[RMDB]
RNA sequence: GGGAACGACUCGAGUAGAGUCGAAAAAUACUGGUGAGUUCGCUCCACUGGAAACAUAAUAUGUACUCUGUUGUGCUGGACGACUCAGUACUGGAGUCGAUUGUUGCAAACGCCCACCACUAAUAAACGGAUAAUAAUGGUUCGCCAUUAUUAUCCGAAAAGAAACAACAACAACAAC
Reactivity to DMS in 0.01 (KOAc 150mM, MgCl2 10mM, bicine 150mM(pH8.5), 24C), signal-to-noise 5, nucleotides 027 to 126: a080u000a080c060u000g010g000u010g000a090g010u010u000c140g010c060u010c040c060a070c080u000g000g010a120a080a070c090a060u000a070a060u010a300u000g010u000a050c050u000c070u010g020u010u010g010u000g000c030u000g000g020a300c090g000a050c060u000c000a060g010u000a010c040u000g000g000a040g000u000c010g000a140u000u000g010u010u000g000c100a070a080a080c140g000c030c020c010a050c100c070a060c100u010a080a080u010a060a080a190
Reactivity to 2A3 in 0.01 (KOAc 150mM, MgCl2 10mM, bicine 150mM(pH8.5), 24C), signal-to-noise 3, nucleotides 027 to 126: a000u070a030c010u010g050g000u030g020a070g050u020u120c080g020c080u030c060c020a010c010u040g000g030a030a060a010c030a020u190a120a060u110a160u190g040u060a040c010u060c050u070g210u300u030g020u100g010c020u050g030g050a040c030g030a040c060u010c070a020g040u000a020c030u050g050g000a010g010u020c010g070a060u110u080g110u080u100g020c050a120a100a050c040g010c030c020c010a020c020c000a080c060u070a070a190u120a180a100a070
The record gives the reactivity of an RNA of 177 nucleotides to DMS and 2A3. For DMS the reverse transcriptase was MarathonRT. The reactions ran in a buffer of 150 mM KOAc, 10 mM MgCl2 and 150 mM bicine (pH 8.5), at 24 C. 2A3 adducts were read by reverse transcription with SuperScript II with manganese. Source: RMDB library OK2TST, as collected in RNAgym.